[RMDB]
RNA sequence: GGGAACGACUCGAGUAGAGUCGAAAAGAUAUGGAUCCAUGAAAUUCCGUCAGCCGUUGAAAUCGGAAACGAUGGAGGCUGAUGGGAACACAUGGAUCCUAAGUCAAAACCCUACUUCGGUAGGGAACACAAGACAAUCCUUCGGGAUUGUCUUGUGAAAAGAAACAACAACAACAAC
Reactivity to DMS in 0.01 (KOAc 150mM, MgCl2 10mM, bicine 150mM(pH8.5), 24C), signal-to-noise 2, nucleotides 027 to 126: g040a040u000a300u010g000g000a000u010c010c000a000u000g000a080a080a210u000u000c000c000g010u000c010a010g000c000c000g000u020u030g000a120a110a010u000c000g000g000a130a100a150c000g010a020u000g000g000a110g000g040c020u030g010a000u000g000g020g000a000a030c210a190c000a000u000g010g000a010u000c000c000u010a000a050g000u000c030a100a050a120a110c000c000c000u000a030c000u000u020c170g010g000u000a000g000g000g040a020a050
Reactivity to 2A3 in 0.01 (KOAc 150mM, MgCl2 10mM, bicine 150mM(pH8.5), 24C), signal-to-noise 2, nucleotides 027 to 126: g000a000u050a020u150g000g000a000u010c010c000a000u000g040a150a290a070u020u010c010c020g020u010c010a020g010c020c000g300u300u050g070a020a000a040u000c020g020g000a050a010a020c000g030a000u030g010g040a040g000g020c010u000g010a010u000g020g010g000a000a000c050a000c010a020u000g000g000a000u000c000c010u000a010a000g000u000c010a040a000a030a200c000c000c010u000a010c010u020u060c290g140g020u010a000g010g030g040a060a010
Annotation:
The record gives the reactivity of an RNA of 177 nucleotides to DMS and 2A3. The reactions ran in a buffer of 150 mM KOAc, 10 mM MgCl2 and 150 mM bicine (pH 8.5), at 24 C. For DMS, 1,716 sequencing reads were counted.